[RMDB]
RNA sequence: GGGAACGACUCGAGUAGAGUCGAAAAAUGGUCUGAUAUUAUCGGUCUGUAUUUAUGGAGAGGAGCUUCAACACACUCACGAUUUAUGUUUAAUCUCACUUUUGACGGCACGAUAAAUCUUAGUGUCCUACACAACAACCUUCUUGAAGACCAGUGAUCAGCCUAUAAAUUUCGAUUUAUAGGCUGAAAAAGAAACAACAACAACAAC
Reactivity to DMS in 0.01 (KOAc 150mM, MgCl2 10mM, bicine 150mM(pH8.5), 24C), signal-to-noise 4, nucleotides 027 to 156: a050u000g010g010u000c020u010g010a170u000a110u000u010a080u000c040g040g030u000c030u000g030u000a090u010u000u000a090u010g010g000a120g020a130g010g000a150g010c080u000u000c040a080a100c070a050c030a080c040u010c060a100c110g010a070u000u010u000a060u010g020u000u000u000a060a070u000c030u010c020a060c180u000u000u010u000g020a070c060g010g000c100a050c030g000a060u000a010a030a050u000c060u010u010a110g000u010g010u000c030c030u010a120c070a070c080a060a050c080a040a070c040c010u000u010c080u010u010g010a150a070g010a030c010c010a040g020u000g010a150
Reactivity to 2A3 in 0.01 (KOAc 150mM, MgCl2 10mM, bicine 150mM(pH8.5), 24C), signal-to-noise 6, nucleotides 027 to 156: a000u040g000g010u010c010u030g030a020u090a050u170u090a060u080c030g030g030u020c070u080g040u050a170u070u240u060a130u180g070g010a040g010a030g050g020a010g010c020u040u060c070a060a020c030a010c010a010c040u120c050a070c140g080a060u010u140u110a080u090g060u000u010u020a030a050u020c010u010c020a160c060u020u040u040u100g060a040c050g000g020c040a010c160g030a020u030a080a070a040u030c030u050u070a040g010u010g010u030c010c060u070a040c040a000c010a120a060c010a040a040c010c020u080u140c030u060u100g040a030a010g010a020c010c000a000g010u010g010a060